This 207-nucleotide RNA was probed chemically with 2A3 and DMS.
The DMS profile rests on 1,550 reads.
The reactions ran in a buffer of 150 mM KOAc, 10 mM MgCl2 and 150 mM bicine (pH 8.5), at 24 C.
It was measured as part of the RMDB library M2RFPK.
RNA sequence: GGGAACGACUCGAGUAGAGUCGAAAAGAAACGCAAGGCCGCUGACCGACGGGAUAUUGUGGGGCUUACCACAGGGGACGCGGCGUUAUCACUUGCCUUUUAAGCAGACCGUCUGGGCUGCAUACAAACCACCCAACUAUCUUCGGAUAGUUGGGAAUCAUUGUAACGUCUUCGGACGUUACAAUGAAAAAGAAACAACAACAACAAC
Reactivity to 2A3 in 0.01 (KOAc 150mM, MgCl2 10mM, bicine 150mM(pH8.5), 24C), signal-to-noise 2, nucleotides 027 to 156: g010a010a030a000c040g000c000a000a000g130g030c010c020g030c030u050g070a030c000c040g050a060c050g120g140g050a150u110a070u180u130g020u040g000g000g090g040c160u110u240a060c000c000a000c020a090g010g000g000g130a000c010g000c050g040g010c020g000u090u040a080u040c030a010c040u010u020g010c010c000u040u080u050u040a090a030g010c030a000g050a140c000c030g140u190c150u200g070g060g000c000u000g010c010a010u050a050c030a000a060a000c000c020a030c010c000c000a000a000c000u000a000u000c000u000u060c110g030g000a000u000a000g000u000u000g000g000g000a000a000
Reactivity to DMS in 0.01 (KOAc 150mM, MgCl2 10mM, bicine 150mM(pH8.5), 24C), signal-to-noise 1, nucleotides 027 to 156: g000a190a020a040c060g000c020a080a050g010g020c020c020g020c010u000g000a300c050c020g000a200c030g010g010g040a170u000a100u000u000g010u020g010g000g020g110c140u000u020a150c000c020a050c070a000g000g000g010g000a120c120g000c010g020g020c010g020u000u030a050u000c140a300c090u000u010g000c000c010u000u000u000u000a080a170g020c010a050g000a000c020c020g060u000c250u010g000g000g020c020u010g050c000a140u010a080c100a040a130a100c010c020a110c000c000c000a020a000c000u000a020u000c000u000u060c300g040g020a060u000a050g000u000u010g020g020g010a030a010
For 2A3, 1,212 sequencing reads were counted. 2A3 adducts were read by reverse transcription with SuperScript II with manganese.